Annotation: The record gives the reactivity of an RNA of 177 nucleotides to 2A3 and DMS. The RNA was probed in 150 mM KOAc, 10 mM MgCl2 and 150 mM bicine (pH 8.5) at 24 C. Values cover nucleotides 27 to 126.
[RMDB]
RNA sequence: GGGAACGACUCGAGUAGAGUCGAAAAUGGACCUGACAGAUGUUCUGGCAGACCUGCGUAUGCUUCUGGCCCGCCUUGUCGGCAAGGAUAUCGAGCUCAAGAUCGAUCAUGGGCGCGAUCUUUGGCAAUGCCGAUCGCGUUUCGACGCGAUCGGCAUAAAAGAAACAACAACAACAAC
Reactivity to 2A3 in 0.01 (KOAc 150mM, MgCl2 10mM, bicine 150mM(pH8.5), 24C), signal-to-noise 1, nucleotides 027 to 126: u090g000g100a090c000c010u030g030a000c040a040g070a040u130g040u100u010c020u020g040g070c000a000g060a040c000c020u040g030c050g050u070a050u110g040c020u080u130c080u120g030g000c000c040c030g000c000c040u020u100g060u090c020g010g070c030a030a010g050g020a050u020a020u170c020g040a040g110c040u000c020a030a060g000a040u040c020g010a020u050c040a150u180g060g070g070c050g020c010g010a020u000c010u000u090u060g000g060c050a060
Reactivity to DMS in 0.01 (KOAc 150mM, MgCl2 10mM, bicine 150mM(pH8.5), 24C), signal-to-noise 1, nucleotides 027 to 126: u020g000g000a110c020c010u010g020a120c090a070g000a240u000g020u000u000c000u000g000g010c000a020g020a110c070c030u000g010c060g020u000a100u000g010c040u000u010c080u010g000g020c030c040c030g000c040c000u010u000g010u010c060g000g000c080a060a030g010g000a070u000a050u010c040g010a070g020c020u000c120a050a020g010a060u000c130g010a110u000c040a120u010g010g020g020c080g000c000g000a030u000c010u000u000u000g020g010c020a100